Notes
Structure probing data (2A3) for a 207-nucleotide construct. The 2A3 profile rests on 733 reads. 2A3 adducts were read by reverse transcription with SuperScript II with manganese.
RNA sequence: GGGAACGACUCGAGUAGAGUCGAAAACGAGUGCAACAAAGACGCGGUUGCCGAUCGGUAUGGAUGCCACCGUGACGGCUCAAUCACACAAGUGCCAACGAUAACGAGGCGCUCGCUAUUGCUGCGUAAAAGCGACGAUCGUUCGCGAUCGUCGCAAUCUCAGAACGUACUUCGGUACGUUCUGAGAAAAAGAAACAACAACAACAAC
Reactivity to 2A3 in 0.01 (KOAc 150mM, MgCl2 10mM, bicine 150mM(pH8.5), 24C), signal-to-noise 1, nucleotides 027 to 156: c010g010a060g050u050g050c050a030a010c000a050a180a000g100a040c070g000c000g020g000u070u070g000c010c000g010a060u000c000g000g080u080a020u160g060g110a050u120g020c030c000a000c000c030g030u050g030a070c020g010g060c010u000c000a070a100u120c010a020c010a010c020a160a000g090u030g080c000c000a090a000c110g090a050u040a180a000c110g010a000g030g060c000g000c040u010c000g010c010u040a070u130u160g060c060u050g000c000g080u090a070a160a090a010g030c000g000a000c000g000a000u000c000g020u070u050c300g000c020g070a000u000c000g000u000c000g010c000a000a000